Structure probing data (2A3 and DMS) for a 207-nucleotide construct. The RNA was probed in 150 mM KOAc, 10 mM MgCl2 and 150 mM bicine (pH 8.5) at 24 C. The 2A3 profile rests on 2,006 reads. For DMS the reverse transcriptase was MarathonRT. In probing experiments dimethyl sulfate is read out at A N1 and C N3, which are open when not base-paired.

RNA sequence: GGGAACGACUCGAGUAGAGUCGAAAAUGUACUUAGCAAAAGCCUGAUGGUGGGAGACACUCCGCCCCAUCUCCGUGAUCCAGGUCACUGCAUGUUGCAACUACUCAUGUUGGAAUUCAGUACUCAUGGGUCAGUGUAUCUGAGAACCUGCACUACCCCAGAUACUCAGUUUCGACUGAGUAUCUGGAAAAGAAACAACAACAACAAC
Reactivity to 2A3 in 0.01 (KOAc 150mM, MgCl2 10mM, bicine 150mM(pH8.5), 24C), signal-to-noise 3, nucleotides 027 to 156: u100g010u050a030c030u080u110a060g070c040a040a080a080a000g030c000c060u080g020a100u080g020g060u020g040g120g030a060g020a030c140a060c100u120c040c030g070c000c000c010c030a030u020c040u040c050c050g040u050g020a030u040c040c020a000g000g020u040c040a020c110u030g040c040a050u110g040u050u050g060c000a060a060c010u050a020c000u040c040a060u090g070u070u030g130g060a050a060u270u180c060a040g040u040a020c010u010c050a060u040g000g000g030u020c040a020g010u040g000u050a070u050c070u030g040a020g040a250a040c000c040u070g000c050a030c070u120a060c010c050
Reactivity to DMS in 0.01 (KOAc 150mM, MgCl2 10mM, bicine 150mM(pH8.5), 24C), signal-to-noise 2, nucleotides 027 to 156: u000g020u000a070c080u000u020a150g010c070a030a130a150a200g060c020c060u000g020a060u010g020g040u010g000g000g010a120g030a100c050a060c060u000c020c070g000c020c010c010c030a150u000c030u010c020c050g000u000g020a060u000c090c000a020g000g000u000c060a090c080u000g010c080a120u010g000u000u000g060c010a030a140c060u000a090c080u060c070a130u000g050u020u000g000g000a110a120u000u000c060a060g010u000a090c030u000c020a040u010g020g000g020u010c030a040g040u000g000u000a060u000c030u050g000a140g000a080a030c030c030u000g020c000a060c060u000a100c120c060